[RMDB]
RNA sequence: GGGAACGACUCGAGUAGAGUCGAAAACUAGGUGAACAGAGACACCAGAUACUGAGAUACGGAAACUCAGGGAAGAUUAGGUGUGUGUACAGAAAUCAAGAGCUCUAUUUUGGACACAUUGUAUUUGAGAUGUCUAUUGGAAACCUAAGAGACGUUGCUUCCUUGAAGAAUUCGUUCUUCAAGGAAGAAAAGAAACAACAACAACAAC
Reactivity to 2A3 in 0.01 (KOAc 150mM, MgCl2 10mM, bicine 150mM(pH8.5), 24C), signal-to-noise 9, nucleotides 027 to 156: c020u010a020g020g000u020g070a100a040c030a030g060a010g010a020c000a000c010c010a000g010a030u060a030c030u010g030a020g010a060u180a190c090g110g120a080a100a040c020u030c030a040g040g050g040a070a120g040a160u150u190a080g070g000u030g010u010g000u000g010u070a030c020a030g070a030a070a030u150c090a160a090g040a070g110c050u040c020u160a110u040u040u040u050g040g010a000c000a000c010a030u060u130g100u090a080u030u070u040g170a230g030a150u030g010u000c000u020a230u070u070g030g010a080a030a010c000c000u030a070a020g070a010g000a060c050g020u040u030g010
Reactivity to DMS in 0.01 (KOAc 150mM, MgCl2 10mM, bicine 150mM(pH8.5), 24C), signal-to-noise 4, nucleotides 027 to 156: c080u000a030g010g020u010g010a120a230c050a130g010a110g000a100c000a030c030c010a130g010a130u010a060c010u000g000a060g010a180u000a300c070g010g010a190a060a150c010u000c000a040g000g000g010a090a120g000a120u000u000a110g020g020u000g040u000g020u000g010u000a090c020a040g020a020a050a250u010c060a070a100g010a170g010c060u000c020u000a190u000u000u000u000g000g020a050c020a020c020a050u010u010g020u000a080u000u000u010g020a090g020a030u010g000u000c020u000a080u000u000g010g000a140a090a050c020c010u000a030a120g010a140g010a200c040g000u000u000g010
Description: An RNA of 207 nucleotides, treated with 2A3 and DMS and read out base by base. The 2A3 profile rests on 7,691 reads. The RNA was probed in 150 mM KOAc, 10 mM MgCl2 and 150 mM bicine (pH 8.5) at 24 C. Values are in units of 0.01, from 0 to 300, in steps of 10.